[RMDB]
RNA sequence: GGGAACGACUCGAGUAGAGUCGAAAAGAUAUGGAAUCCAGUGUACUAGAUGCUGUGUGGGAGAGCUGGGUCGGAAACGACCCUGCUCAUCGAUCACACAGCAUCUAGUACACGGAUUCCUAAGUCACCUAUCCUUAAGGUUCGCCUUAAGGAUAGGAAAAGAAACAACAACAACAAC
Reactivity to DMS in 0.01 (KOAc 150mM, MgCl2 10mM, bicine 150mM(pH8.5), 24C), signal-to-noise 2, nucleotides 027 to 126: g000a060u010a300u010g000g010a020a000u000c000c000a170g080u000g010u000a020c000u000a000g000a020u000g010c000u000g000u000g020u010g000g010g000a050g000a020g020c010u000g020g020g020u000c010g000g000a090a110a210c010g010a020c000c010c000u000g010c010u000c020a110u000c150g010a080u000c000a010c000a010c000a010g000c000a000u000c000u000a010g010u000a000c000a000c010g000g000a010u000u000c000c000u000a020a070g010u010c030a290